Source: RMDB libraries RFM100 and RFMREP, as collected in RNAgym. The record gives the reactivity of an RNA of 177 nucleotides to DMS and 2A3. DMS adducts were read by reverse transcription with MarathonRT. The reactions ran in a buffer of 150 mM KOAc, 10 mM MgCl2 and 150 mM bicine (pH 8.5), at 24 C.

RNA sequence: GGGAACGACUCGAGUAGAGUCGAAAAGGCUCAUAGGGCAGGGUUUGUUGGGCCUUUGAUGGAUCUUUUGGAAUCUGACUGGGACUACUUCUGGGCAACCGGAGGCGGACUCGGACGGAAUCUGAUCGUACACAAGAUUGUUCGCAAUCUUGUGUACAAAAGAAACAACAACAACAAC
Reactivity to DMS in 0.01 (KOAc 150mM, MgCl2 10mM, bicine 150mM(pH8.5), 24C), signal-to-noise 3, nucleotides 027 to 126: g000g000c030u000c010a040u020a120g010g000g020c060a050g020g010g000u020u020u030g020u000u020g010g000g000c010c010u020u000u010g010a090u010g010g010a120u000c000u000u000u010u010g000g000a020a050u000c010u000g000a130c010u000g010g000g000a130c010u000a090c010u000u020c000u010g000g010g000c300a070a220c010c010g000g010a020g010g010c020g020g000a060c010u000c000g000g010a080c020g000g000a020a030u010c000u000g010a070u020c120
Reactivity to 2A3 in 0.01 (KOAc 150mM, MgCl2 10mM, bicine 150mM(pH8.5), 24C), signal-to-noise 4, nucleotides 027 to 126: g010g000c010u010c020a050u190a100g060g060g050c030a070g130g000g000u100u200u140g110u050u050g030g000g000c000c000u050u020u050g070a050u040g030g020a040u010c020u020u130u060u150g040g010a040a030u010c000u000g040a050c010u010g000g010g010a020c000u010a010c000u030u000c000u020g000g020g000c010a050a080c020c000g000g000a000g000g010c020g000g020a050c000u000c000g010g000a030c020g000g000a020a020u010c020u030g030a070u100c080